[RMDB]
RNA sequence: GGGAACGACUCGAGUAGAGUCGAAAAGCUCCCGCUUACUGCCCCCUGCCCAGGCUGGUGUGCACCCCCUCUGGCUGCUUUCAAGGCCUCUUCUCUCUUCUCGGCAGGACAGGCACAGGCAGGUGGCGUGGAAGAAGUAAUUCGUUACUUCUUCCACAAAAGAAACAACAACAACAAC
Reactivity to 2A3 in 0.01 (KOAc 150mM, MgCl2 10mM, bicine 150mM(pH8.5), 24C), signal-to-noise 9, nucleotides 027 to 126: g050c040u030c000c010c010g020c050u100u220a150c060u090g000c000c000c000c000c010u010g010c010c010c000a030g040g030c020u040g030g070u080g030u080g060c020a070c000c010c000c000c000u040c010u010g050g000c010u030g020c020u050u110u130c080a110a050g040g000c010c010u010c020u050u020c020u000c010u010c010u100u020c030u030c020g030g010c020a020g010g040a040c020a020g000g000c010a010c010a060g020g000c010a010g010g020u010g020g000c020
Reactivity to DMS in 0.01 (KOAc 150mM, MgCl2 10mM, bicine 150mM(pH8.5), 24C), signal-to-noise 6, nucleotides 027 to 126: g010c160u000c000c010c010g010c140u010u020a100c180u020g010c010c010c090c010c020u000g000c010c000c090a130g000g010c030u010g000g020u010g000u010g010c080a170c030c010c010c030c020u010c030u000g010g000c010u010g010c060u000u010u020c110a120a140g000g010c030c010u000c060u010u010c010u000c030u000c030u010u010c050u000c040g010g000c060a060g010g000a110c070a110g000g000c010a030c100a160g000g010c020a030g010g000u010g000g020c050